[RMDB]
RNA sequence: GGGAACGACUCGAGUAGAGUCGAAAAAAGGCUGUUGAAGAAGCAUUUGGUGUAACUGCAACUCCAAUAGUAGCUGCUGGCGCAGCUGGUGCUACACAAGAAGCUGCUAGCGAAGUUAGUGUAAAGGUAGUGGACGGAUUUUCGAAUCCGUCCACUAAAAAGAAACAACAACAACAAC
Reactivity to DMS in 0.01 (KOAc 150mM, MgCl2 10mM, bicine 150mM(pH8.5), 24C), signal-to-noise 1, nucleotides 027 to 126: a040a100g000g000c000u000g010u000u000g000a070a010g000a120a210g000c010a070u000u000u000g010g000u000g020u000a050a040c200u040g040c040a030a160c020u010c040c020a010a150u010a050g000u000a010g050c020u000g020c010u010g010g010c090g030c110a090g030c000u000g010g050u010g000c040u000a070c090a110c100a110a010g010a060a040g000c020u000g030c030u000a040g000c180g000a060a200g000u010u000a030g020u010g030u000a090a120a040g010g020